[RMDB]
RNA sequence: GGGAACGACUCGAGUAGAGUCGAAAAGAAGCGGCGAAAAAUGCGUGUAAAUAAAAGGUCAAUAUGACCUGACAGUGAUACCAAAUUAAAUGGGUCGAAGUCUCGCCAAAAUACGCAUCAAAUAGAAAGGCAAAGAUGAUUUCGAUCAUCUUUGCCUAAAAGAAACAACAACAACAAC
Reactivity to DMS in 0.01 (KOAc 150mM, MgCl2 10mM, bicine 150mM(pH8.5), 24C), signal-to-noise 1, nucleotides 027 to 126: g000a210a090g060c090g000g010c050g000a050a070a120a120a030u000g000c010g020u020g000u050a060a100a070u000a040a010a050a010g000g010u000c030a220a060u000a200u000g000a010c000c000u000g000a000c000a060g010u020g000a000u060a140c000c000a040a100a200u060u030a110a100a100u000g010g000g020u000c040g000a090a080g000u000c000u000c080g000c020c080a040a130a060a020u000a010c000g000c000a010u060c180a030a000a160u050a060g000a070a070